This 207-nucleotide RNA was probed chemically with DMS and 2A3. The DMS profile rests on 2,676 reads.

RNA sequence: GGGAACGACUCGAGUAGAGUCGAAAAGUAGUAGAUUGUUGGCUACGUUUAAUUGGACAAGUAUAGCUGAGGGUGUUAGAAAUGAGUUCAUUAAAAUAUGUGAUAUCAACGGAACAUAUCUAUAUAAUUAUACUAUUGCUGUUAGUAUGACUAUUGACUUCCAUCAAGUAUUCGUACUUGAUGGAAGAAAAGAAACAACAACAACAAC
Reactivity to DMS in 0.01 (KOAc 150mM, MgCl2 10mM, bicine 150mM(pH8.5), 24C), signal-to-noise 2, nucleotides 027 to 156: g020u020a100g030u000a110g010a220u000u010g020u000u000g020g000c040u000a040c040g010u010u000u020a090a150u010u000g020g040a090c020a050a120g030u000a170u000a100g020c030u010g010a090g040g020g060u000g030u000u000a080g020a060a090a060u010g000a140g020u000u010c060a130u000u020a050a050a020a070u010a040u010g030u010g010a110u000a120u020c070a090a140c090g000g020a150a090c040a020u000a070u000c010u030a190u010a170u010a050a140u000u010a130u000a090c030u010a070u000u010g010c010u000g000u000u010a040g030u000a030u010g000a060c060u010a180u010u000g000a220
Reactivity to 2A3 in 0.01 (KOAc 150mM, MgCl2 10mM, bicine 150mM(pH8.5), 24C), signal-to-noise 3, nucleotides 027 to 156: g020u030a010g010u010a000g000a300u040u040g010u070u030g020g000c030u020a000c010g000u020u120u060a150a050u070u130g040g000a020c000a070a020g050u050a070u100a130g030c070u050g040a040g020g040g030u010g030u050u080a040g040a060a090a080u110g000a020g050u040u050c070a050u080u190a080a020a060a020u060a030u060g030u010g050a070u050a020u160c060a060a090c040g030g040a080a040c020a020u090a020u100c080u110a130u060a050u040a300a040u160u060a090u050a220c000u060a080u090u030g040c010u030g000u080u000a060g000u030a050u060g030a030c040u070a120u140u140g030a060

Conditions: 150 mM KOAc, 10 mM MgCl2 and 150 mM bicine (pH 8.5), 24 C.
The data come from the RNA Mapping Database (RMDB), library OK3TST.
For 2A3 the reverse transcriptase was SuperScript II with manganese.